Chemical mapping of a 177-nucleotide RNA with DMS. The RNA was probed in 150 mM KOAc, 10 mM MgCl2 and 150 mM bicine (pH 8.5) at 24 C.
[RMDB]
RNA sequence: GGGAACGACUCGAGUAGAGUCGAAAAGAGGAGGAAUUUCGGAAGGAAUUCUCCCAAGAAGGUCCAAGAGAACUUUCAAGAAGGAGGAUUUUUCCCCAAGACGCUGGUGGACUCUUGGAAUGGGAAAUCAAGAAGUAGACUUCGGUCUACUUCUUGAAAAAGAAACAACAACAACAAC
Reactivity to DMS in 0.01 (KOAc 150mM, MgCl2 10mM, bicine 150mM(pH8.5), 24C), signal-to-noise 1, nucleotides 027 to 126: g000a100g040g010a140g010g010a040a060u000u000u020c020g000g090a050a120g000g000a000a000u000u000c000u000c010c000c000a090a120g000a070a050g000g010u000c000c010a080a030g030a040g030a120a140c010u000u010u020c020a070a090g000a170a150g000g000a040g000g000a070u010u000u000u000u000c000c000c010c000a060a060g010a140c260g010c080u000g030g020u010g020g000a240c040u010c000u020u010g000g000a020a010u000g030g000g010a110a080a080

For DMS, 688 sequencing reads were counted. DMS adducts were read by reverse transcription with MarathonRT.